The data come from the RNA Mapping Database (RMDB), library TTRDES. This 177-nucleotide RNA was probed chemically with DMS and 2A3. The RNA was probed in 150 mM KOAc, 10 mM MgCl2 and 150 mM bicine (pH 8.5) at 24 C. High 2A3 reactivity points to a flexible backbone, as in loops and unpaired stretches. For DMS, 3,212 sequencing reads were counted.
RNA sequence: GGGAACGACUCGAGUAGAGUCGAAAAGAUAUGGAUCCGGUAGUAGCAACAGCUAACGUCGGAAACGACGUUAGACAUGCUAGUACCGGGAUCCUAAGUCAAAAGGUAAAGGCUUCGGCCUUUACCACAAUGGAGAGUCGUUCGCGACUCUCCAUUGAAAAGAAACAACAACAACAAC
Reactivity to DMS in 0.01 (KOAc 150mM, MgCl2 10mM, bicine 150mM(pH8.5), 24C), signal-to-noise 3, nucleotides 027 to 126: g010a050u010a300u000g000g010a020u000c000c010g000g010u010a010g010u000a000g010c020a050a120c300a190g000c000u000a000a010c000g000u000c000g010g000a130a070a230c010g000a000c000g000u000u000a000g020a020c090a200u000g000c010u000a020g000u000a000c000c000g020g040g000a000u000c000c000u010a050a140g010u000c050a080a080a180a110g010g010u010a010a010a020g010g010c010u000u020c260g040g010c000c010u000u000u000a000c000c000a020
Reactivity to 2A3 in 0.01 (KOAc 150mM, MgCl2 10mM, bicine 150mM(pH8.5), 24C), signal-to-noise 1, nucleotides 027 to 126: g050a030u100a020u150g010g010a000u040c000c010g060g000u050a100g130u000a000g040c030a030a190c140a220g060c040u020a010a000c000g000u000c000g020g000a030a030a000c010g010a000c000g000u010u010a000g050a040c000a010u080g010c020u010a030g170u000a020c000c000g000g000g000a000u000c010c000u010a060a020g040u040c070a000a020a040a300g030g000u030a010a000a000g010g000c020u080u230c300g090g000c030c000u000u000u000a000c000c000a000